Conditions: 150 mM KOAc, 10 mM MgCl2 and 150 mM bicine (pH 8.5), 24 C. Chemical mapping of a 177-nucleotide RNA with DMS and 2A3. The 2A3 profile rests on 4,459 reads. For DMS the reverse transcriptase was MarathonRT. The data come from the RNA Mapping Database (RMDB), library OK2TST.

RNA sequence: GGGAACGACUCGAGUAGAGUCGAAAAAGUCGCUCUUCCGAUCUAUUGAUCAAAGAUAUGAAUCUGUUCAGUCUCGACAUCUUUGUACUCUUACCAGUCUCUAUCUAACAAGAUCAAAUAUGCCAAGACACACACUUUAGUUCGCUAAAGUGUGUGUAAAAGAAACAACAACAACAAC
Reactivity to DMS in 0.01 (KOAc 150mM, MgCl2 10mM, bicine 150mM(pH8.5), 24C), signal-to-noise 4, nucleotides 027 to 126: a060g020u000c030g030c040u000c030u000u010c050c060g010a060u000c040u010a120u000u000g010a050u010c060a090a090a050g000a030u010a060u020g010a060a070u000c040u000g000u000u000c060a070g000u000c030u010c060g000a080c120a040u010c040u010u000u000g010u010a050c070u000c030u010u010a100c100c030a050g010u000c040u000c030u000a040u010c050u000a050a080c170a070a060g000a030u000c060a040a030a080u010a090u020g000c060c050a070a130g010
Reactivity to 2A3 in 0.01 (KOAc 150mM, MgCl2 10mM, bicine 150mM(pH8.5), 24C), signal-to-noise 4, nucleotides 027 to 126: a000g030u010c000g020c020u020c000u110u000c040c030g020a040u000c010u100a170u080u150g040a030u060c030a090a050a050g040a010u100a030u200g090a070a030u000c030u040g080u050u060c030a020g040u020c010u020c070g030a030c020a070u020c050u060u090u060g040u050a050c010u000c010u040u040a040c010c030a010g060u010c000u000c000u060a050u010c010u020a020a070c040a100a020g030a040u060c030a030a060a090u160a060u120g050c020c020a050a010g120